[RMDB]
RNA sequence: GGGAACGACUCGAGUAGAGUCGAAAACUAACUGCCUCCAGCACUUCUUGGUGACGCCAUAAGGAGGAGCACCGAGGUAGGUGCUUUGUCAGCUUUUUUGGCUUGUAUUCACUGGCAACCCGGCGAGUAACACUGUGACCUUCGGGUCACAGUGUUAAAAAGAAACAACAACAACAAC
Reactivity to 2A3 in 0.01 (KOAc 150mM, MgCl2 10mM, bicine 150mM(pH8.5), 24C), signal-to-noise 2, nucleotides 027 to 126: c030u040a020a030c010u030g020c000c000u080c020c020a000g030c030a020c040u060u060c020u050u210g060g010u040g090a080c030g060c040c020a060u080a300a040g030g070a010g030g000a010g040c000a040c000c010g050a030g050g130u160a070g000g000u010g040c010u010u030u000g120u010c000a020g030c010u110u080u130u030u050u170g060g010c020u000u020g040u050a110u040u040c100a060c030u010g060g000c000a020a080c010c030c010g040g060c050g070a010g050
Reactivity to DMS in 0.01 (KOAc 150mM, MgCl2 10mM, bicine 150mM(pH8.5), 24C), signal-to-noise 2, nucleotides 027 to 126: c090u000a100a120c060u000g000c100c000u020c090c080a130g010c060a050c030u000u040c080u000u000g030g010u010g000a040c080g000c040c000a080u000a120a190g000g000a180g000g020a140g020c030a040c030c000g000a000g010g000u040a020g050g060u040g000c000u010u010u010g030u000c000a010g010c090u000u000u000u000u000u000g020g040c180u040u000g000u020a110u020u000c000a070c040u000g000g000c060a050a150c030c010c020g000g000c000g030a070g020